The data come from the RNA Mapping Database (RMDB), library OK2TRN. This 177-nucleotide RNA was probed chemically with 2A3 and DMS. For 2A3, 964 sequencing reads were counted. The RNA was probed in 150 mM KOAc, 10 mM MgCl2 and 150 mM bicine (pH 8.5) at 24 C. For 2A3 the reverse transcriptase was SuperScript II with manganese. For DMS the reverse transcriptase was MarathonRT.
[RMDB]
RNA sequence: GGGAACGACUCGAGUAGAGUCGAAAAACAAAGAUUAAAACAGGUUUUGGUACUGGUGGUUGGCAGUUAGCGGCAUUAAACAUAUGUAGUAAAGCAGCUCGUAAACCUUUGAUUGCCGAUGGUGGUACAAUUGAUCACUGUUCGCAGUGAUCAAUUGAAAAGAAACAACAACAACAAC
Reactivity to 2A3 in 0.01 (KOAc 150mM, MgCl2 10mM, bicine 150mM(pH8.5), 24C), signal-to-noise 1, nucleotides 027 to 126: a000c090a040a130a000g080a060u120u220a170a060a010a030c050a010g080g000u080u010u020u090g080g040u040a020c030u040g020g000u000g030g100u040u120g000g050c040a000g030u070u110a030g040c000g020g000c010a000u110u260a080a110a040c020a010u100a050u210g060u070a070g010u040a000a120a100g000c050a020g030c000u020c030g030u020a140a040a000c000c000u030u060u030g060a040u070u050g020c050c000g060a060u090g130g100u080g000g050u070a030
Reactivity to DMS in 0.01 (KOAc 150mM, MgCl2 10mM, bicine 150mM(pH8.5), 24C), signal-to-noise 2, nucleotides 027 to 126: a120c050a070a100a100g010a110u000u010a090a080a030a130c100a120g000g000u000u000u000u000g010g000u000a060c100u000g020g020u010g000g010u000u000g030g030c020a040g010u000u000a070g020c060g020g000c010a040u000u000a050a060a130c130a040u000a070u000g020u010a030g000u010a030a070a080g000c080a050g000c050u000c090g010u000a040a070a080c040c020u000u020u010g040a060u000u000g010c010c030g010a050u010g010g000u000g000g020u010a110